Conditions: 150 mM KOAc, 10 mM MgCl2 and 150 mM bicine (pH 8.5), 24 C.
Structure probing data (2A3 and DMS) for a 177-nucleotide construct.
DMS adducts were read by reverse transcription with MarathonRT.
It was measured as part of the RMDB library M2PK50.
2A3 adducts were read by reverse transcription with SuperScript II with manganese.
[RMDB]
RNA sequence: GGGAACGACUCGAGUAGAGUCGAAAAGUAUCCAUGUUCGCAUGGAUACGAAAUAUGCGCGCCUAUAUCCGGUUGGCUGGAUGCGCGCGUCUGGCUGGCCGGUGGUGCUAGUCUUCGGACUAGCAAAGGUAGCUAUUUGAUUCGUCAAAUAGCUACCAAAAGAAACAACAACAACAAC
Reactivity to 2A3 in 0.01 (KOAc 150mM, MgCl2 10mM, bicine 150mM(pH8.5), 24C), signal-to-noise 3, nucleotides 027 to 126: g000u000a000u000c000c000a000u000g050u010u060c240g000c110a000u000g000g000a000u000a000c000g000a010a020a000u240a050u090g090c120g000c010g040c030c020u150a130u030a060u240c000c000g010g010u020u010g020g000c000u000g000g000a000u020g020c180g000c030g000c000g060u000c000u010g010g020c000u010g010g000c000c010g000g020u020g030g030u050g000c000u000a000g000u000c000u010u040c250g060g000a000c000u010a010g000c000a040a010a010
Reactivity to DMS in 0.01 (KOAc 150mM, MgCl2 10mM, bicine 150mM(pH8.5), 24C), signal-to-noise 4, nucleotides 027 to 126: g010u010a010u010c000c000a010u000g010u010u020c220g020c010a010u010g000g010a010u000a000c000g010a050a060a090u000a080u000g010c130g020c120g010c010c070u010a110u010a070u000c000c000g010g010u000u000g010g010c010u000g010g000a010u000g010c050g020c220g020c010g020u000c010u000g000g000c000u000g000g000c010c000g000g000u000g000g020u000g010c000u000a000g000u000c000u000u020c190g030g000a010c000u000a010g010c000a020a050a070